[RMDB]
RNA sequence: GGGAACGACUCGAGUAGAGUCGAAAAGCGGGACGCUGUACCACUCCCUGUCCAUCGGCGCGGUUUCGAGCUCCGUGCUCGAAACACACACGCUCCGUUGUUGACGCAAGUACCUCAACCUUCCGGAGUCUUUAGAAAGUUUCGACUUUCUAAAGACAAAAGAAACAACAACAACAAC
Reactivity to DMS in 0.01 (KOAc 150mM, MgCl2 10mM, bicine 150mM(pH8.5), 24C), signal-to-noise 6, nucleotides 027 to 126: g010c030g000g020g000a080c060g010c020u010g000u010a100c090c050a110c100u000c020c010c010u030g010u020c010c010a070u030c030g010g010c060g000c030g000g000u020u000u000c000g000a010g020c010u020c220c170g000u040g000c000u000c000g010a010a000a020c010a060c150a170c150a300c050g010c000u010c010c010g000u000u000g000u030u030g010a050c060g010c090a070a080g020u010a040c040c030u020c040a110a090c130c070u010u010c020c000g000g010a300
Reactivity to 2A3 in 0.01 (KOAc 150mM, MgCl2 10mM, bicine 150mM(pH8.5), 24C), signal-to-noise 9, nucleotides 027 to 126: g070c050g010g030g040a030c080g020c120u080g060u100a080c020c020a050c070u030c010c010c030u050g030u000c010c000a030u030c010g010g000c010g000c020g060g000u000u000u010c000g000a010g000c010u040c130c280g120u230g000c000u000c010g000a000a010a000c010a000c010a010c000a010c020g010c000u000c000c010g010u020u040g050u050u160g020a020c020g000c040a040a060g040u080a100c010c020u090c040a060a070c010c030u060u010c010c010g020g020a050